[RMDB]
RNA sequence: GGGAACGACUCGAGUAGAGUCGAAAACACUGCUCCUGCCUGUCUGAACGCAGAGGUAGAACGGUAAUCCCCUUGUGUUUGACACAUGAGCUCCACACUGAGAUCCCACCAGCUCUCCACCCUCCAGCCAUCACAUCUUCCACUACAGCAGCAAAUGGGGACACAUAACUUUCGAGUUAUGUGUCCCAAAAGAAACAACAACAACAAC
Reactivity to 2A3 in 0.01 (KOAc 150mM, MgCl2 10mM, bicine 150mM(pH8.5), 24C), signal-to-noise 2, nucleotides 027 to 156: c100a020c010u030g000c020u030c060c000u040g010c040c010u100g020u090c040u050g040a160a120c120g040c120a000g030a010g070g010u050a030g010a080a030c070g000g030u110a110a110u120c000c020c040c000u090u030g010u020g050u090u110u300g100a020c010a000c010a120u030g000a020g020c010u050c000c020a050c000a000c080u080g010a020g020a130u050c050c000c000a020c030c020a020g050c000u030c000u000c040c020a100c030c020c000u100c000c000a020g030c000c000a030u080c000a030c000a100u070c000u160u060c030c050a010c010u050a050c050a000g020c000a000g050c020a110a020a070u300g000

Source: RMDB library OK3TST, as collected in RNAgym. An RNA of 207 nucleotides, treated with 2A3 and read out base by base. The RNA was probed in 150 mM KOAc, 10 mM MgCl2 and 150 mM bicine (pH 8.5) at 24 C. Reactivities are given for positions 27 through 156.